Source: RMDB library OK2TST, as collected in RNAgym. An RNA of 177 nucleotides, treated with DMS and 2A3 and read out base by base. The reactions ran in a buffer of 150 mM KOAc, 10 mM MgCl2 and 150 mM bicine (pH 8.5), at 24 C.
RNA sequence: GGGAACGACUCGAGUAGAGUCGAAAAAGAUCGGGAUAGAGAUACGAACCAAGUUUCCUGAAUUCCCUGUCUGGCUCAACGAUGUCCAGAACGGAUACUUCGAUAUCGCCAUGUGGCUCAGUACGAAUCUUAAUAGUGUCUUCGGACACUAUUAAGAAAAAGAAACAACAACAACAAC
Reactivity to DMS in 0.01 (KOAc 150mM, MgCl2 10mM, bicine 150mM(pH8.5), 24C), signal-to-noise 9, nucleotides 027 to 126: a030g000a080u000c060g010g010g010a040u010a090g010a170g010a150u000a080c170g000a100a120c150c110a090a130g010u000u000u000c010c000u000g010a060a140u000u000c010c000c010u000g000u000c020u000g010g000c010u000c040a080a170c050g000a030u000g000u000c010c180a120g010a040a070c140g000g010a100u000a070c290u010u000c040g000a040u000a010u000c030g010c030c040a130u010g010u010g010g000c020u000c030a030g000u010a050c060g010a070a110
Reactivity to 2A3 in 0.01 (KOAc 150mM, MgCl2 10mM, bicine 150mM(pH8.5), 24C), signal-to-noise 7, nucleotides 027 to 126: a010g070a150u030c010g000g020g010a020u060a090g150a030g030a080u090a240c090g050a070a040c060c030a070a070g070u010u090u000c010c000u010g020a040a050u040u020c000c010c010u010g040u030c020u010g010g010c010u000c020a040a070c050g030a030u030g020u020c020c060a050g030a050a010c020g070g040a080u090a230c030u040u020c020g020a020u010a020u060c010g000c040c060a130u120g070u130g050g010c070u070c180a000g020u050a040c030g040a040a080
For DMS, 13,664 sequencing reads were counted. For 2A3, 10,093 sequencing reads were counted.